Structure probing data (2A3 and DMS) for a 177-nucleotide construct. It was measured as part of the RMDB library OK2TRN. Reactivities are given for positions 27 through 126. For 2A3, 1,006 sequencing reads were counted. 2A3 adducts were read by reverse transcription with SuperScript II with manganese. The RNA was probed in 150 mM KOAc, 10 mM MgCl2 and 150 mM bicine (pH 8.5) at 24 C.
RNA sequence: GGGAACGACUCGAGUAGAGUCGAAAAAGAGAUGACAUUCCUUGAUGAUCCUGUAUUGAGAUAUAGUCAGCUGACUGGGCUGGUAUUGAAAAUAUUCCCAUCAACGUUAACAUACAUCAGGAAGUCCCGUUGGUAGCUCAUUCGUGAGCUACCAACGAAAAGAAACAACAACAACAAC
Reactivity to 2A3 in 0.01 (KOAc 150mM, MgCl2 10mM, bicine 150mM(pH8.5), 24C), signal-to-noise 2, nucleotides 027 to 126: a010g190a050g030a090u120g000a000c070a230u090u000c010c000u050u150g000a010u010g010a030u050c030c040u070g070u130a110u000u220g130a070g040a050u040a000u030a130g110u070c030a010g000c030u050g140a300c160u250g030g020g000c000u010g030g000u050a060u040u090g050a000a060a000a060u150a070u050u110c000c000c000a020u070c010a020a030c120g060u160u080a040a000c030a060u160a070c020a020u030c000a020g040g010a040a000g030u060c000c000
Reactivity to DMS in 0.01 (KOAc 150mM, MgCl2 10mM, bicine 150mM(pH8.5), 24C), signal-to-noise 2, nucleotides 027 to 126: a080g000a220g020a140u000g010a050c080a110u000u000c010c000u020u000g040a030u000g010a140u000c140c040u010g010u000a090u010u000g000a190g000a070u000a020u010a100g020u030c040a050g010c020u000g010a090c150u000g000g000g000c170u000g010g030u000a000u000u000g010a080a080a050a060u000a060u000u010c030c010c000a090u000c080a040a060c100g000u000u000a090a070c180a080u000a110c030a060u000c060a020g010g000a020a120g000u010c030c150